[RMDB]
RNA sequence: GGGAACGACUCGAGUAGAGUCGAAAAAAGGCUAAUCCUCCCAGGGUCAGUCGGGGGCUAAGGCGAGGCCGGAAGGCGUAGUCGAAGCGCAGCAGGCAGACAUUCCUGCACCGCGAUGGAACCGUCAACUCGAGCUAUGUUUCGACAUAGCUCGAGUAAAAGAAACAACAACAACAAC
Reactivity to 2A3 in 0.01 (KOAc 150mM, MgCl2 10mM, bicine 150mM(pH8.5), 24C), signal-to-noise 1, nucleotides 027 to 126: a000a000g040g010c030u070a130a060u050c040c050u040c000c060c010a000g060g000g000u010c030a040g080u010c000g000g000g020g040g010c000u020a130a050g000g000c050g020a010g000g070c000c000g000g100a120a010g020g040c060g000u030a040g010u020c000g000a000a000g000c000g020c000a000g160c000a000g000g110c030a030g030a210c010a110u120u000c000c000u030g000c000a010c000c030g100c000g000a010u000g030g000a070a030c000c000g000u030c000a000
Reactivity to DMS in 0.01 (KOAc 150mM, MgCl2 10mM, bicine 150mM(pH8.5), 24C), signal-to-noise 2, nucleotides 027 to 126: a020a060g050g100c180u050a150a140u040c000c070u020c000c010c000a040g000g000g000u000c050a210g000u010c070g000g000g000g000g040c000u000a010a300g030g000c000g020a140g000g010c010c000g000g050a260a080g000g010c000g000u000a300g000u020c000g000a260a120g000c040g010c070a170g030c000a040g020g040c300a180g020a120c270a230u000u040c040c000u000g010c000a300c010c000g010c020g010a100u000g000g010a050a040c000c010g000u030c130a010